RNA sequence: GGGAACGACUCGAGUAGAGUCGAAAAGUAUAGAAGCAUGAGACCGCAUGCGUUAUACGAUGAAUCACGGUCGAAUCCGUUGUGCGAAAGCACUUCGGUAAUGCAUAUCGGUAGACAGAUCAGCCCGGAUCAGCUACCGUAAUUAGUACGGGCAAGAGAUACGGUGGUAUUUCGAUACCACCGUAUCAAAAGAAACAACAACAACAAC
Reactivity to DMS in 0.01 (KOAc 150mM, MgCl2 10mM, bicine 150mM(pH8.5), 24C), signal-to-noise 1, nucleotides 027 to 156: g040u030a090u000a090g020a130a150g000c000a020u000g000a260g010a020c040c010g050c000a020u010g010c070g000u000u000a060u000a140c100g000a170u010g000a130a100u000c140a020c040g000g000u010c020g000a140a150u000c010c000g030u000u010g060u000g040c020g000a140a150a280g010c010a010c000u000u000c030g000g030u020a020a040u000g000c000a110u000a130u020c010g000g020u000a040g030a150c050a050g000a090u000c000a030g000c050c020c010g020g020a200u000c020a130g010c020u000a010c000c000g000u000a000a060u000u000a170g010u010a010c050g000g030g000c030a100a110g030a190
Reactivity to 2A3 in 0.01 (KOAc 150mM, MgCl2 10mM, bicine 150mM(pH8.5), 24C), signal-to-noise 3, nucleotides 027 to 156: g070u060a060u040a180g140a130a020g020c000a000u000g000a000g000a080c000c000g040c020a040u150g100c010g020u040u090a120u060a110c090g010a040u130g060a040a120u160c100a030c070g000g010u000c030g010a020a020u000c000c000g000u000u000g010u000g010c000g020a100a000a010g000c000a000c000u000u000c000g010g000u040a080a020u070g010c060a020u090a050u150c010g010g000u000a000g060a080c110a000g020a010u020c000a000g000c000c000c000g000g000a010u020c010a000g000c000u000a000c000c000g010u020a020a040u160u160a020g120u030a020c000g010g000g000c000a010a020g060a000

The data come from the RNA Mapping Database (RMDB), library OK3TST.
An RNA of 207 nucleotides, treated with DMS and 2A3 and read out base by base.
For 2A3 the reverse transcriptase was SuperScript II with manganese.